[RMDB]
RNA sequence: GGGAACGACUCGAGUAGAGUCGAAAAACGGGUCUUCCUGGCGGUUUCAGACACCAGCGCCAGAUAAUCGCCCUGUGAGAUAUCUCCGCGUCCUUUCGCCUGUCGUACCUGCGCCUGGAUACGCUGCCAUGGAGUAAUACUUCGGUAUUACUCCAUGAAAAGAAACAACAACAACAAC
Reactivity to 2A3 in 0.01 (KOAc 150mM, MgCl2 10mM, bicine 150mM(pH8.5), 24C), signal-to-noise 9, nucleotides 027 to 126: a010c020g000g000g010u010c020u050u020c020c000u000g030g000c020g040g040u040u120u150c090a090g050a110c040a040c060c030a050g040c010g000c030c000a020g010a070u170a050a080u090c040g020c000c000c010u030g030u040g030a120g010a050u110a070u080c030u000c020c010g020c020g030u050c010c000u040u080u040c030g010c010c020u050g040u070c030g020u040a080c000c010u020g020c020g010c010c010u010g000g010a030u050a070c050g010c030u030g020c010
Reactivity to DMS in 0.01 (KOAc 150mM, MgCl2 10mM, bicine 150mM(pH8.5), 24C), signal-to-noise 7, nucleotides 027 to 126: a120c050g010g010g000u000c020u000u010c040c010u010g010g030c040g000g000u000u010u020c080a090g010a120c150a090c100c050a100g010c040g010c030c020a050g000a070u020a060a060u010c070g000c030c010c020u010g020u020g000a090g010a100u010a060u010c030u000c040c040g000c050g000u000c030c020u010u010u000c060g010c040c020u000g010u010c040g010u000a070c040c020u000g010c030g010c030c030u000g000g000a100u010a050c080g000c020u010g000c110
Source information:
Chemical mapping of a 177-nucleotide RNA with 2A3 and DMS. The DMS profile rests on 31,369 reads. The RNA was probed in 150 mM KOAc, 10 mM MgCl2 and 150 mM bicine (pH 8.5) at 24 C.